[RMDB]
RNA sequence: GGGAACGACUCGAGUAGAGUCGAAAAGAUAUGGACUGGAGUCGCGAGUUAUCUCGGAAACGAGCCGAGACUCGAACUACGACCAAUCAGUCCUAAGUCAAAACCUUUCGGCUUCGGCCGAAAGGAAGCUAACGAGUUACUUCGGUAACUCGUUAGCAAAAGAAACAACAACAACAAC
Reactivity to DMS in 0.01 (KOAc 150mM, MgCl2 10mM, bicine 150mM(pH8.5), 24C), signal-to-noise 1, nucleotides 027 to 126: g020a050u000a300u000g020g000a040c030u000g050g000a140g000u000c000g000c090g060a010g050u000u040a060u000c060u010c000g000g000a040a120a300c230g000a110g010c040c000g000a010g020a140c070u000c010g000a110a040c220u000a300c000g000a050c040c090a050a130u000c000a000g000u000c010c000u000a000a150g040u000c060a020a070a060a110c000c020u000u000u000c010g020g000c000u000u040c300g010g000c020c000g020a000a000a050g000g000a000a010
Reactivity to 2A3 in 0.01 (KOAc 150mM, MgCl2 10mM, bicine 150mM(pH8.5), 24C), signal-to-noise 2, nucleotides 027 to 126: g010a010u070a050u120g000g010a000c010u010g030g050a060g060u000c000g000c050g080a010g010u130u280a180u170c000u000c000g050g060a220a300a220c190g060a110g150c030c000g050a030g010a010c000u000c010g030a050a050c090u130a050c110g010a000c000c030a040a090u140c000a000g010u000c000c000u010a150a010g010u010c050a010a000a060a300c010c000u010u000u000c000g000g010c000u030u090c220g160g010c020c010g000a000a000a000g010g000a000a000
An RNA of 177 nucleotides, treated with DMS and 2A3 and read out base by base. For DMS, 587 sequencing reads were counted. The data come from the RNA Mapping Database (RMDB), library TTRDEL. For 2A3 the reverse transcriptase was SuperScript II with manganese. The RNA was probed in 150 mM KOAc, 10 mM MgCl2 and 150 mM bicine (pH 8.5) at 24 C.